RNA sequence: GGGAACGACUCGAGUAGAGUCGAAAAGGCUAAUGUAUGUAUAUUUGUGUUCAUUAGCCGGUAAAGCAACACAAAUAUACAUAGCUUUACCACGACGGUGGACAUGCGAAAGCAUGUCCAUCGUCGAGCACGUUCUAGGCUUCGGCCUAGAACGUGCAAAAGAAACAACAACAACAAC
Reactivity to 2A3 in 0.01 (KOAc 150mM, MgCl2 10mM, bicine 150mM(pH8.5), 24C), signal-to-noise 1, nucleotides 027 to 126: g020g030c030u050a080a000u190g050u220a010u000g000u020a020u040a010u000u010u010g040u000g010u000u040c070a050u190u270a040g070c040c030g000g000u070a000a000a010g020c060a030a020c000a000c010a000a010a000u070a000u020a020c020a000u000a000g000c000u000u020u010a060c020c000a000c030g000a000c000g000g040u010g010g030a000c050a020u030g000c000g120a210a030a000g000c000a020u000g000u000c000c000a000u000c000g000u000c000g000a000
Chemical mapping of a 177-nucleotide RNA with 2A3. Source: RMDB library OK1LIB, as collected in RNAgym. Reactivities are given for positions 27 through 126. The reactions ran in a buffer of 150 mM KOAc, 10 mM MgCl2 and 150 mM bicine (pH 8.5), at 24 C.